Chemical mapping of a 177-nucleotide RNA with 2A3 and DMS. It was measured as part of the RMDB library OK1LIB. 2A3 adducts were read by reverse transcription with SuperScript II with manganese. For DMS, 76,532 sequencing reads were counted. DMS adducts were read by reverse transcription with MarathonRT. The RNA was probed in 150 mM KOAc, 10 mM MgCl2 and 150 mM bicine (pH 8.5) at 24 C.

RNA sequence: GGGAACGACUCGAGUAGAGUCGAAAACAAGCGCGUCAGGUGCUCCGGAUGUUUGGAGCCGCUUCGCAAGCGGUGUCUGCACGUGCGAGGGCGGCCUCCUGUGCGGCCAGACUCUUGCAACCUGGCCUCUAGUCAGCCGGUUCGCUGGUUGGCUAGAAAAAGAAACAACAACAACAAC
Reactivity to 2A3 in 0.01 (KOAc 150mM, MgCl2 10mM, bicine 150mM(pH8.5), 24C), signal-to-noise 9, nucleotides 027 to 126: c050a030a030g100c040g030c050g090u030c010a010g010g020u020g020c020u050c050c060g060g030a110u200g060u060u080u070g020g000a020g000c000c000g000c000u070u070c070g050c130a050a020g090c020g010g050u050g090u050c040u070g020c020a010c040g140u050g030c100g010a040g000g030g050c090g070g200c000c010u010c000c010u030g020u040g020c010g010g000c010c000a010g010a050c010u030c020u070u090g010c020a070a120c010c000u000g000g000c000c000
Reactivity to DMS in 0.01 (KOAc 150mM, MgCl2 10mM, bicine 150mM(pH8.5), 24C), signal-to-noise 9, nucleotides 027 to 126: c070a120a100g010c120g010c120g020u000c030a040g000g010u000g000c020u020c110c120g000g010a050u040g010u010u000u000g000g000a140g010c000c010g010c010u000u000c250g000c160a120a090g010c030g000g000u010g010u030c040u010g010c020a040c040g020u010g010c070g000a030g010g010g000c140g000g000c030c020u000c020c020u000g000u010g010c060g000g000c020c010a020g000a050c030u010c030u010u020g010c080a110a080c060c000u000g000g000c000c040